This 207-nucleotide RNA was probed chemically with 2A3.
It was measured as part of the RMDB library M2RFPK.
The RNA was probed in 150 mM KOAc, 10 mM MgCl2 and 150 mM bicine (pH 8.5) at 24 C.
RNA sequence: GGGAACGACUCGAGUAGAGUCGAAAAGAAAGAAAGAAGCGAGCUGGCGCAGCCGCACGGGCAACCGUCAAUUCAGCACUUCACAAGUCUUGUCGUUCUGACAGGACAUCCAUCAACCCACCGGGAAAAAAGGACUACAGCUUCGGCUGUAGUCCAACCGUAUGUUAUGGUUCGCCAUAACAUACGGAAAAGAAACAACAACAACAAC
Reactivity to 2A3 in 0.01 (KOAc 150mM, MgCl2 10mM, bicine 150mM(pH8.5), 24C), signal-to-noise 1, nucleotides 027 to 156: g010a000a030a000g060a000a120a000g030a040a020g020c060g020a000g000c000u030g010g060c000g030c050a020g000c070c040g060c060a050c090g040g040g000c010a020a030c020c000g000u010c010a030a090u080u060c020a010g000c020a040c040u020u020c050a060c030a170a130g020u010c020u020u010g000u020c010g060u190u280c150u230g000a000c000a020g000g000a000c000a020u010c000c000a010u090c050a060a100c010c010c030a040c070c070g040g030g000a030a080a010a030a000a030g020g000a020c000u010a000c010a000g010c030u020u160c170g180g030c000u000g000u000a000g000u000c010c000a000a000